[RMDB]
RNA sequence: GGGAACGACUCGAGUAGAGUCGAAAACCACCGCAAUUCGUUGCGGUGGGAAGCUGCAAUUCGCUGUCUGCACCACAGACGGCCAAUCCGUCAAAGCGAAAACUGGAGGGUCAUUCGUGACCCUCAAGCUUUACAGCAGUUUCGACUGCUGUAAAGCAAAAGAAACAACAACAACAAC
Reactivity to DMS in 0.01 (KOAc 150mM, MgCl2 10mM, bicine 150mM(pH8.5), 24C), signal-to-noise 3, nucleotides 027 to 126: c000c000a000c000c000g010c000a010a030u000u000c190g030u000u000g020c000g010g010u000g000g000g000a030a080g010c050u000g000c130a120a080u000u000c300g010c000u010g010u000c010u000g010c060a190c220c220a090c050a030g010a010c000g000g010c070c170a050a070u000c050c040g010u000c060a060a100a050g010c020g000a060a020a080a110c110u010g010g000a030g010g010g010u000c000a040u000u010c170g020u000g010a010c000c000c010u010c000a010a070
Reactivity to 2A3 in 0.01 (KOAc 150mM, MgCl2 10mM, bicine 150mM(pH8.5), 24C), signal-to-noise 3, nucleotides 027 to 126: c000c000a010c010c000g020c000a010a040u070u070c200g040u110u040g000c000g010g000u000g020g000g000a030a020g020c060u090g000c050a020a150u030u030c030g000c020u000g030u050c020u030g010c070a080c060c030a030c000a030g000a010c000g000g010c010c010a030a030u050c040c050g120u140c110a100a100a090g050c020g050a040a030a040a070c090u140g140g010a000g010g020g000u000c010a010u020u110c150g100u040g000a000c000c010c020u000c010a010a000